[RMDB]
RNA sequence: GGGAACGACUCGAGUAGAGUCGAAAAGGGUUACCGUUCGCGGUAACCCAAAUAAAAUCAGCGGUAAGCUCCCGUAAAAUAUUACCGCUGAACGGGACCUUAAAAUCGAUGUGUUCGCACAUCGAAAGGUAACUUACAUCUUCGGAUGUAAGUUACCAAAAGAAACAACAACAACAAC
Reactivity to 2A3 in 0.01 (KOAc 150mM, MgCl2 10mM, bicine 150mM(pH8.5), 24C), signal-to-noise 2, nucleotides 027 to 126: g000g000g000u010u010a020c020c000g010u030u040c240g000c030g110g000u020a000a000c000c000c000a010a010a000u010a000a020a000a110u020c010a000g000c000g000g020u010a030a030g050c040u000c040c020c020g030u060a050a210a020a110u270a030u080u020a030c000c010g000c000u010g000a000a020c000g030g040g060a050c010c000u180u180a060a110a020a130u060c010g000a000u000g050u000g030u040u060c190g000c040a000c000a000u010c000g000a000a000a000
Reactivity to DMS in 0.01 (KOAc 150mM, MgCl2 10mM, bicine 150mM(pH8.5), 24C), signal-to-noise 1, nucleotides 027 to 126: g000g030g010u070u000a000c000c000g000u000u020c170g030c000g040g010u000a000a000c010c010c010a000a000a020u000a070a090a120a070u000c000a000g040c010g040g000u010a020a020g000c140u000c020c000c000g010u010a080a020a050a070u020a080u000u000a010c020c000g000c000u020g000a030a040c230g000g000g000a170c110c070u000u000a020a030a120a060u000c000g010a020u000g070u010g000u000u010c300g000c010a000c000a010u000c000g000a010a070a030